[RMDB]
RNA sequence: GGGAACGACUCGAGUAGAGUCGAAAAUGGAAAAGCCGUACCAACAAUGACAUCUUCAAUCAUAUUCUUAUUGAAUUUUCCGUCAAUACGUUUCAAUACGCCUUGUAAUACUUUGGCUGCGACAUCACUCUGUAGGAUUCUUCGGAAUCCUACAGAGAAAAGAAACAACAACAACAAC
Reactivity to DMS in 0.01 (KOAc 150mM, MgCl2 10mM, bicine 150mM(pH8.5), 24C), signal-to-noise 2, nucleotides 027 to 126: u030g000g040a110a050a100a080g010c030c060g000u020a100c030c020a060a050c100a040a110u010g000a070c060a030u000c020u010u000c010a060a050u020c070a040u030a100u010u060c040u010u010a060u020u010g000a010a030u010u000u000u020c070c060g010u000c010a020a030u020a040c020g020u000u010u000c040a050a020u000a050c080g000c020c080u040u000g020u000a040a010u060a100c150u000u000u000g000g010c000u030g000c060g000a050c100a050u010c150a170
Reactivity to 2A3 in 0.01 (KOAc 150mM, MgCl2 10mM, bicine 150mM(pH8.5), 24C), signal-to-noise 7, nucleotides 027 to 126: u130g040g040a080a070a010a010g040c000c010g040u030a060c010c030a060a040c050a070a150u080g030a030c010a080u010c030u080u010c040a060a090u040c050a050u060a110u240u050c070u100u070a080u040u100g030a040a040u020u050u070u030c030c020g040u030c010a030a030u050a110c070g000u020u030u140c080a060a050u100a110c060g020c010c000u050u060g040u110a060a160u040a190c070u080u070u050g030g000c020u010g030c030g030a030c010a060u080c010a020